[RMDB]
RNA sequence: GGGAACGACUCGAGUAGAGUCGAAAAGAUAUGGAACCUCUACAUGAAAAUGAAUUCAGGUGCAUACUCGGAAACGAGUAUGGCACCUGAAAUUCAGCAAACCCUGUGUGUAGAGGUUCCUAAGUCAGAUAUUGUUAUCCUUCGGGAUAACAAUAUCAAAAGAAACAACAACAACAAC
Reactivity to DMS in 0.01 (KOAc 150mM, MgCl2 10mM, bicine 150mM(pH8.5), 24C), signal-to-noise 3, nucleotides 027 to 126: g000a030u010a090u000g010g000a010a020c000c000u000c000u000a010c000a000u000g010a170a110a130a130u000g000a010a020u000u010c000a000g020g020u000g020c000a020u000a000c010u010c000g010g000a030a020a050c000g020a020g000u000a000u000g030g020c010a000c000c000u000g000a000a000a010u000u000c000a060g020c300a160a100a260c060c040c030u010g010u010g030u000g010u000a000g010a030g010g010u000u000c000c000u010a000a050g000u000c030a170
The record gives the reactivity of an RNA of 177 nucleotides to DMS. Conditions: 150 mM KOAc, 10 mM MgCl2 and 150 mM bicine (pH 8.5), 24 C. For DMS, 3,978 sequencing reads were counted.